[RMDB]
RNA sequence: GGGAACGACUCGAGUAGAGUCGAAAAGAAUCGCAGUUCGCUGCGAUUCAAAUAAAAUCAGCGGUAAGGUGGCGUAAAAUAUUACCGCUGAACGCCUCCUUAAAACUACGUCCUUCGGGACGUAGAAGAGUGUAGUUAUCUUCGGAUAACUACACUCAAAAGAAACAACAACAACAAC
Reactivity to DMS in 0.01 (KOAc 150mM, MgCl2 10mM, bicine 150mM(pH8.5), 24C), signal-to-noise 3, nucleotides 027 to 126: g010a010a010u010c000g010c000a020g010u000u000c290g010c000u000g030c000g000a000u000u000c000a030a050a060u010a060a090a120a100u000c000a010g020c000g000g000u000a010a020g010g030u000g020g010c180g010u000a060a040a070a080u010a050u000u000a000c000c000g000c000u000g000a020a020c130g010c100c050u000c070c050u010u000a060a050a100a130c000u000a000c000g010u000c010c000u000u010c180g020g000g000a010c000g010u000a000g000a040a050
Reactivity to 2A3 in 0.01 (KOAc 150mM, MgCl2 10mM, bicine 150mM(pH8.5), 24C), signal-to-noise 4, nucleotides 027 to 126: g000a010a000u000c000g000c000a010g030u040u060c110g070c110u000g010c000g010a000u010u010c000a000a000a000u070a000a010a000a040u020c010a000g010c010g030g010u010a020a020g070g110u080g140g080c160g090u110a080a100a070a040u150a050u050u020a010c000c000g000c000u000g000a010a000c010g060c010c020u040c010c010u100u150a030a150a040a040c000u000a000c000g000u010c000c000u010u030c140g070g010g000a000c000g000u000a000g000a000a020
Chemical mapping of a 177-nucleotide RNA with DMS and 2A3. Values cover nucleotides 27 to 126.